[RMDB]
RNA sequence: GGGAACGACUCGAGUAGAGUCGAAAAGAUAUGGACCCAUCCUUAGUGGCGAAGAACACACAUCGGAAACGAUGUGUGGGAGCCACGAGGAGUGGGUCCUAAGUCAAACGGGAUCUUCGGAUCCCGAGACAUGCUCACAGUUCGCUGUGAGCAUGUCAAAAGAAACAACAACAACAAC
Reactivity to 2A3 in 0.01 (KOAc 150mM, MgCl2 10mM, bicine 150mM(pH8.5), 24C), signal-to-noise 2, nucleotides 027 to 126: g030a020u100a030u180g000g010a000c030c000c000a000u030c000c020u060u070a260g010u010g000g010c050g260a300a010g110a170a000c010a020c000a010c000a010u020c000g060g080a100a100a020c020g000a010u000g010u000g000u020g020g000g000a000g030c000c000a000c000g000a000g000g000a060g220u200g000g020g010u000c000c000u010a030a000g030u010c040a020a050a050c010g000g000g000a010u010c010u030u100c300g120g010a000u010c000c000c000g000a020
Reactivity to DMS in 0.01 (KOAc 150mM, MgCl2 10mM, bicine 150mM(pH8.5), 24C), signal-to-noise 2, nucleotides 027 to 126: g000a030u000a300u000g000g000a000c000c010c000a070u000c000c000u020u000a060g090u000g010g000c040g000a060a130g030a130a160c000a020c000a000c000a000u000c030g000g010a220a160a160c000g040a010u000g040u000g010u000g020g000g050a040g000c000c000a000c000g000a000g010g000a020g070u000g010g000g050u000c000c000u000a000a100g030u010c020a140a150a290c030g010g000g030a000u010c000u000u010c230g050g000a000u000c000c000c000g000a040